Structure probing data (DMS and 2A3) for a 207-nucleotide construct. The RNA was probed in 150 mM KOAc, 10 mM MgCl2 and 150 mM bicine (pH 8.5) at 24 C. DMS adducts were read by reverse transcription with MarathonRT.
RNA sequence: GGGAACGACUCGAGUAGAGUCGAAAACAGAAGACUAUUAUGGAAAUCAACAUAAUGUCAUAGUCGAACAUUUAAGAGAUCAAAGCAUCAAAAUAGGAGAUGUCUUUAACGAGGACAAACUAUCUGAUGUAGGACAUCAAUAUGCCAAUAAUGAUAAAACUCUCCACUGAUUCGUCAGUGGAGAGUUAAAAGAAACAACAACAACAAC
Reactivity to DMS in 0.01 (KOAc 150mM, MgCl2 10mM, bicine 150mM(pH8.5), 24C), signal-to-noise 1, nucleotides 027 to 156: c060a200g000a100a130g020a030c020u000a090u000u010a010u000g020g000a160a150a180u010c090a230a120c020a060u000a060a000u000g000u000c020a130u000a100g010u000c040g060a080a110c130a110u000u000u000a110a090g000a120g000a040u000c020a090a140a300g040c000a010u000c020a050a020a010a040u010a040g000g000a270g000a240u000g000u010c000u000u000u000a170a100c210g000a210g000g000a000c000a060a130a050c060u000a130u000c020u000g010a150u010g000u000a050g000g030a060c050a000u000c010a040a070u000a000u010g000c000c040a050a220u000a050a010u000g020a160u000a050a060
Reactivity to 2A3 in 0.01 (KOAc 150mM, MgCl2 10mM, bicine 150mM(pH8.5), 24C), signal-to-noise 2, nucleotides 027 to 156: c010a000g130a130a020g010a090c070u120a090u060u020a020u080g000g060a090a110a190u170c030a010a130c020a020u030a040a000u010g010u020c010a010u040a020g050u030c040g090a030a020c020a050u110u140u090a100a060g040a010g040a010u040c040a060a090a050g000c010a010u060c040a000a110a050a050u050a010g000g120a190g060a050u060g050u000c000u030u070u030a070a020c140g020a050g050g000a000c020a010a080a000c030u070a010u030c020u000g030a010u090g060u070a040g090g000a010c000a000u010c000a000a050u060a080u170g040c000c030a020a010u110a090a040u040g050a020u100a070a010